[RMDB]
RNA sequence: GGGAACGACUCGAGUAGAGUCGAAAAUAAUACGCGGAGGGGCUGCGGGGGAGGACUUAGGGGACCAGGACCUCAGUGAGGCCCCAGAAAGCACCCGGGAGGGGCCUCCGAUCCUGCCUGGGAGGGACCAUGAAUAGAUUUUCGAAUCUAUUCAUGGAAAAGAAACAACAACAACAAC
Reactivity to 2A3 in 0.01 (KOAc 150mM, MgCl2 10mM, bicine 150mM(pH8.5), 24C), signal-to-noise 4, nucleotides 027 to 126: u110a010a030u140a050c060g030c050g040g020a100g030g040g010g010c110u140g040c100g020g010g020g000g010a090g020g020a020c030u070u120a040g000g000g000g020a020c020c010a010g020g000a020c010c030u080c040a030g030u070g100a010g000g000c000c000c010c000a010g050a020a040a010g030c020a030c020c040c000g010g040g000a090g000g020g010g020c000c010u010c000c000g000a010u030c010c010u020g050c010c010u020g000g010g000a070g010g010g010a020
Reactivity to DMS in 0.01 (KOAc 150mM, MgCl2 10mM, bicine 150mM(pH8.5), 24C), signal-to-noise 3, nucleotides 027 to 126: u050a110a100u040a080c120g020c150g010g000a130g000g000g000g000c120u020g000c230g000g000g020g000g000a100g000g000a070c120u020u020a070g010g010g000g000a100c160c030a020g000g000a010c090c080u000c060a070g000u030g000a030g010g000c000c000c000c010a100g010a110a130a180g010c100a050c070c020c030g010g010g020a250g000g000g000g020c000c000u000c000c010g000a060u020c050c070u010g000c060c020u000g010g010g000a100g040g000g010a170
Source information: The record gives the reactivity of an RNA of 177 nucleotides to 2A3 and DMS. It was measured as part of the RMDB library RFM100. The DMS profile rests on 5,263 reads. The RNA was probed in 150 mM KOAc, 10 mM MgCl2 and 150 mM bicine (pH 8.5) at 24 C. Reactivities are rounded to 0.1 and cut off at 0 and 3.